Conditions: 150 mM KOAc, 10 mM MgCl2 and 150 mM bicine (pH 8.5), 24 C. Structure probing data (2A3) for a 177-nucleotide construct. Reactivities are given for positions 27 through 126.
[RMDB]
RNA sequence: GGGAACGACUCGAGUAGAGUCGAAAAAAGACGACCAAAACACCCCGUGUCUCGCUGUGCCUUCGGGUGCCGAGCACUCCCUCCCUCCGCCGGGUCUGAAAGAACGAUUUUCGGCUGGAGAUGACAGGGAUCACAUCACUUUCGAGUGAUGUGAUCCAAAAGAAACAACAACAACAAC
Reactivity to 2A3 in 0.01 (KOAc 150mM, MgCl2 10mM, bicine 150mM(pH8.5), 24C), signal-to-noise 2, nucleotides 027 to 126: a000a000g190a090c130g040a080c020c020a030a030a000a020c070a090c000c000c000c010g010u020g060u050c000u010c010g060c110u090g000u010g020c010c000u010u030c070g100g010g010u010g000c030c000g000a010g000c010a000c010u000c000c000c000u000c030c010c010u030c000c010g000c000c030g020g000g000u000c000u020g060a090a100a030g100a120a090c110g000a000u020u040u150u220c000g070g000c110u230g000g000a020g010a020u110g000a030c040a020g100